[RMDB]
RNA sequence: GGGAACGACUCGAGUAGAGUCGAAAAUGGGAGAGAAUUCUGGAACAUUCUUAGCACAUAAGACACCUUCUGAGGUCCCCUCCCCGGUGGGAAGAAGGAACCCACUAGCUGAUGUGAGAAGGUAAUAGUCACAAAGUCUAUUCGUAGACUUUGUGACAAAAGAAACAACAACAACAAC
Reactivity to DMS in 0.01 (KOAc 150mM, MgCl2 10mM, bicine 150mM(pH8.5), 24C), signal-to-noise 3, nucleotides 027 to 126: u000g010g000g010a140g020a050g010a030a040u000u000c080u000g020g000a110a090c130a090u000u000c010u000u010a090g050c090a040c100a080u000a050a090g000a120c200a060c020c020u010u000c080u020g000a090g000g000u000c020c000c000c010u010c010c000c000c010g010g000u000g000g000g030a050a040g010a150a090g030g010a080a110c000c000c000a020c020u010a050g010c080u010g000a080u010g010u000g010a050g010a030a030g020g010u000a050a060u010a110
Reactivity to 2A3 in 0.01 (KOAc 150mM, MgCl2 10mM, bicine 150mM(pH8.5), 24C), signal-to-noise 2, nucleotides 027 to 126: u060g020g010g000a030g000a040g050a040a100u130u060c080u150g020g100a120a040c030a080u080u000c030u030u050a030g080c060a000c000a130u130a110a040g080a060c030a020c110c000u060u000c060u130g100a100g080g080u170c000c000c000c030u010c010c000c000c000g000g000u010g000g000g020a100a090g020a040a060g060g000a000a030c000c010c000a000c000u030a020g000c040u120g040a130u120g050u050g110a030g010a020a010g020g000u020a050a090u060a090